[RMDB]
RNA sequence: GGGAACGACUCGAGUAGAGUCGAAAAUCAUCAAGAAGUAGGCUUAGGCCAAUUGCUUGGUGGUGAAAGUAGAGGGAAGGUAGCACUUCGAAGCCUCUAAGUACGCUGUGGGAGUAGUGCUUAAAUCAAAAGCACAGCGACUUCGGUCGCUGUGCAAGUAAUCAUGAAGCUUCGGCUUCAUGAUUACAAAAGAAACAACAACAACAAC
Reactivity to 2A3 in 0.01 (KOAc 150mM, MgCl2 10mM, bicine 150mM(pH8.5), 24C), signal-to-noise 4, nucleotides 027 to 156: u030c000a000u010c000a010a000g030a120a020g050u100a040g030g000c010u080u100a100g080g110c020c030a040a070u060u040g020c000u000u010g000g020u010g000g010u020g020a080a050a020g070u090a010g020a040g000g040g020a060a000g040g020u060a030g020c040a040c090u010u020c050g050a090a030g050c000c000u000c010u020a040a040g030u020a010c030g000c080u030g030u100g050g030g030a070g000u130a010g020u010g040c020u060u070a030a090a100u180c080a070a040a000a010g000c000a000c000a010g010c010g000a000c000u020u070c210g050g000u000c000g000c000u000g000u000g010c000a000a010
Reactivity to DMS in 0.01 (KOAc 150mM, MgCl2 10mM, bicine 150mM(pH8.5), 24C), signal-to-noise 1, nucleotides 027 to 156: u020c010a070u000c030a010a010g000a020a010g030u010a080g060g020c000u000u020a120g040g000c010c000a020a100u010u010g000c020u000u000g000g060u000g040g030u010g030a100a110a110g020u000a040g010a040g030g000g010a070a120g010g070u010a080g000c080a150c050u020u010c010g000a130a190g020c000c000u000c020u000a040a140g030u000a080c060g060c010u000g000u020g000g000g010a160g000u010a070g020u000g010c000u000u000a040a090a120u000c010a030a080a140a180g000c000a030c000a010g050c000g020a040c010u010u010c290g010g060u000c000g050c020u000g030u000g030c000a000a010